[RMDB]
RNA sequence: GGGAACGACUCGAGUAGAGUCGAAAAUUCUCCAGGGCCUUCCUUCUUCGGUGGUCCCGCCUCUCCUGUUCGGUGAACCCUCCCGGGUGUUUCCUCUUCCUAGGUCCGGAGUCGACCUCCAUCUGAUAUACCUUCUUGUUCGCAAGAAGGAAAAGAAACAACAACAACAAC
Reactivity to DMS in 0.01 (KOAc 150mM, MgCl2 10mM, bicine 150mM(pH8.5), 24C), signal-to-noise 9, nucleotides 027 to 129: u010u000c030u000c030c130a140g000g010g040c010c050u000u000c040c030u020u070c020u000u060c090g020g030u000g010g020u010c020c040c040g010c040c000u000c020u010c020c020u010g020u020u020c050g010g040u000g010a120a150c060c020c020u000c040c000c060g010g000g000u030g030u000u000u020c030c030u040c040u020u020c020c010u000a070g010g010u000c040c030g010g010a050g000u000c050g020a100c050c000u010c020c030a070u030c090u020g010a040u000a140u050a120
Reactivity to 2A3 in 0.01 (KOAc 150mM, MgCl2 10mM, bicine 150mM(pH8.5), 24C), signal-to-noise 8, nucleotides 027 to 129: u030u000c020u010c010c010a060g000g020g020c000c010u070u060c060c000u060u130c040u120u110c050g040g010u050g030g020u030c000c000c010g030c000c010u020c000u020c000c010u040g040u080u080c050g030g040u060g080a070a060c010c000c000u030c020c010c000g020g000g010u030g020u010u050u010c010c000u020c000u040u020c000c010u030a040g000g020u000c020c040g040g010a010g010u020c020g030a070c000c000u010c020c010a120u050c060u070g080a030u060a010u040a260
Source information: Chemical mapping of a 170-nucleotide RNA with DMS and 2A3. Source: RMDB library 15KLIB, as collected in RNAgym. DMS (dimethyl sulfate) methylates the pairing face of unpaired adenines and cytosines. The 2A3 profile rests on 54,292 reads. Values cover nucleotides 27 to 129. For 2A3 the reverse transcriptase was SuperScript II with manganese.